[RMDB]
RNA sequence: GGGAACGACUCGAGUAGAGUCGAAAAACUUCCUACUUCGGUAGGAAGUAAAAGUAGAAAAGUUGGUGCUUAGACCACGCCCUCUACCGUAAUAAUAGUUAAACCCUUAGCACUUCGGUGCUAAGAACGUCUAUCUUUCGUUCGCGAAAGAUAGACGAAAAGAAACAACAACAACAAC
Reactivity to 2A3 in 0.01 (KOAc 150mM, MgCl2 10mM, bicine 150mM(pH8.5), 24C), signal-to-noise 1, nucleotides 027 to 126: a000c020u020u020c000c010u040a000c000u010u030c130g100g000u000a000g000g020a000a000g020u000a020a000a000a000g010u020a000g060a020a060a000a000g000u090u010g030g050u140g050c180u200u090a060g050a050c000c000a000c010g000c010c020c020u010c010u000a020c040c030g080u010a090a110u110a160a070u050a150g100u090u130a160a100a080c010c000c000u000u050a000g040c000a000c000u000u060c230g030g000u000g030c000u000a010a000g000a000a000
Reactivity to DMS in 0.01 (KOAc 150mM, MgCl2 10mM, bicine 150mM(pH8.5), 24C), signal-to-noise 1, nucleotides 027 to 126: a060c010u000u000c000c000u000a000c000u010u000c120g050g050u000a010g000g000a000a000g010u000a000a080a070a050g020u000a000g010a030a060a020a080g020u040u000g030g000u000g010c260u010u000a100g030a060c010c020a000c030g000c000c020c020u000c000u010a000c020c130g000u010a100a050u010a050a070u010a090g010u010u010a190a110a080c150c050c000u010u000a000g000c020a010c000u020u000c150g020g010u010g000c020u000a000a000g000a050a080